The record gives the reactivity of an RNA of 177 nucleotides to DMS and 2A3. 2A3 adducts were read by reverse transcription with SuperScript II with manganese. DMS adducts were read by reverse transcription with MarathonRT.
RNA sequence: GGGAACGACUCGAGUAGAGUCGAAAAUUGGGACCGGAAGACCUGAGGGGUACGUCCGGGGUAGGAGUGAAAUCCCGUAAUCCUGGACGGACCACCGGUGGCGAAAGCGCCUCAGGAAGACGGAUCCUUCUAGAUUAACCUUCGGGUUAAUCUAGAAAAAAGAAACAACAACAACAAC
Reactivity to DMS in 0.01 (KOAc 150mM, MgCl2 10mM, bicine 150mM(pH8.5), 24C), signal-to-noise 5, nucleotides 027 to 126: u040u030g010g010g010a030c010c000g020g040a160a130g000a180c000c000u010g000a030g020g020g000g020u000a000c010g020u000c000c000g040g010g010g020u010a150g000g000a050g000u000g040a120a110a180u030c040c000c110g000u040a100a030u040c010c000u000g000g000a010c000g000g000a010c000c010a080c140c150g000g010u030g000g020c020g000a110a080a170g020c010g030c020c000u000c000a000g010g010a300a090g010a260c020g000g000a090u000c000c000
Reactivity to 2A3 in 0.01 (KOAc 150mM, MgCl2 10mM, bicine 150mM(pH8.5), 24C), signal-to-noise 3, nucleotides 027 to 126: u170u110g010g000g000a020c000c000g000g010a070a010g030a040c000c000u010g000a040g010g060g000g010u010a010c000g010u010c000c000g000g000g000g010u020a030g000g020a020g010u110g070a050a050a050u040c000c010c000g010u090a020a020u020c000c010u010g000g000a000c020g000g000a000c000c000a050c030c000g000g030u070g020g030c020g030a120a060a030g140c020g010c010c000u000c000a000g010g020a010a000g090a000c010g000g030a160u030c000c000